[RMDB]
RNA sequence: GGGAACGACUCGAGUAGAGUCGAAAAGGUUCGCACUUCGGUGCGAACCAAAGGCUAAGCAAUAAAUAUCAGCUUGUUCGCUAAGCCACUUACGAGCAGAAAAAACCGUUUGGUUCGCCAAACGGAAGAAUAGUAGUCAGUUCGCUGACUACUAUUCAAAAGAAACAACAACAACAAC
Reactivity to DMS in 0.01 (KOAc 150mM, MgCl2 10mM, bicine 150mM(pH8.5), 24C), signal-to-noise 4, nucleotides 027 to 126: g000g010u000u010c000g030c000a010c000u000u010c190g020g000u010g020c010g010a000a000c000c000a010a030a070g010g010c010u010a110a070g010c040a060a040u000a010a040a110u000a110u010c190a080g010c100u010u000g000u000u000c110g010c040u010a070a050g010c000c020a140c110u020u000a060c060g000a060g010c090a170g000a000a060a060a080a100a110c000c000g000u000u000u000g000g010u000u010c190g010c000c000a000a000a000c000g000g000a020a030
Reactivity to 2A3 in 0.01 (KOAc 150mM, MgCl2 10mM, bicine 150mM(pH8.5), 24C), signal-to-noise 3, nucleotides 027 to 126: g010g000u000u000c000g020c010a010c010u050u090c250g090g000u000g000c000g000a000a000c010c000a010a010a000g000g000c020u060a030a040g030c030a060a080u110a160a130a040u220a130u170c050a010g070c050u020u040g000u040u040c040g000c020u040a050a010g020c000c020a050c030u050u100a040c060g060a040g020c060a070g220a080a110a000a010a000a040c010c000g000u000u010u000g020g030u030u070c190g030c040c000a000a000a020c000g010g000a010a000